[RMDB]
RNA sequence: GGGAACGACUCGAGUAGAGUCGAAAACAUAAGCUUCGGCUUAUGAAAAAUCCUAAGUCCUCGUUUGACGCCUGUUGUCAGCUGUGUGUCGGAAACGACACCAGCUUGGAUUUACAGGCCGAGAGGAUAUGGAAAAAAAGCAAACUUCGGUUUGCAAGCGUCUAAAACUAUUCGUAGUUUUAGACGCAAAAGAAACAACAACAACAAC
Reactivity to 2A3 in 0.01 (KOAc 150mM, MgCl2 10mM, bicine 150mM(pH8.5), 24C), signal-to-noise 2, nucleotides 027 to 156: c000a000u000a000a010g020c050u060u080c240g100g010c000u000u000a000u010g010a030a010a030a000a000u020c000c000u030a100a030g040u000c020c000u010c000g110u040u220u190g050a070c080g010c010c000u020g010u020u000g000u010c010a040g000c010u010g120u020g000u010g000u300c010g000g100a120a110a090c000g000a000c000a000c000c000a000g000c010u000u030g000g010a000u100u120u230a000c000a000g010g000c000c000g030a020g000a000g000g000a000u020a030u020g010g060a030a070a080a000a070a070a010g060c000a000a000a060c000u110u220c290g130g030u020u000u000g010c080a020a050
Reactivity to DMS in 0.01 (KOAc 150mM, MgCl2 10mM, bicine 150mM(pH8.5), 24C), signal-to-noise 1, nucleotides 027 to 156: c010a010u000a000a010g050c000u000u020c280g050g010c000u000u000a030u000g000a000a090a050a060a160u030c010c010u000a110a240g030u010c010c000u000c010g010u020u010u000g000a130c150g000c000c000u000g040u000u000g010u000c070a110g000c020u040g000u010g040u000g020u000c000g020g000a130a150a120c030g020a020c000a000c010c000a020g010c030u060u000g040g040a030u000u000u000a020c000a000g030g000c020c020g000a060g000a030g030g030a020u010a110u020g010g000a000a000a090a130a130a050a180g010c000a000a010a030c000u030u010c300g080g000u000u010u000g030c000a070a060